[RMDB]
RNA sequence: GGGAACGACUCGAGUAGAGUCGAAAACGCAGAUGCCAAACGGAACGAACGCAACGUACAAGCCAUACGCAAUGCAGCCUCAAGUAACAUGGAGGCACGCUUACGAUACUCCAUUGUAGAUUGGAAGUCGACACACCACUUUCGAGUGGUGUGUCGAAAAAGAAACAACAACAACAAC
Reactivity to DMS in 0.01 (KOAc 150mM, MgCl2 10mM, bicine 150mM(pH8.5), 24C), signal-to-noise 2, nucleotides 027 to 126: c090g020c060a070g050a090u000g050c020c030a010a080a100c180g020g020a050a090c120g000a030a130c070g000c020a070a070c080g020u050a020c200a080a080g000c020c030a140u000a090c080g000c030a050a050u000g030c050a090g030c010c030u000c020a090a020g030u000a030a050c060a160u000g000g000a040g000g030c070a000c120g000c040u010u000a070c090g000a090u010a100c100u000c020c000a000u020u010g010u010a180g000a170u000u000g000g020a070a110g000

Description
Source: RMDB library OK2TST, as collected in RNAgym. An RNA of 177 nucleotides, treated with DMS and read out base by base.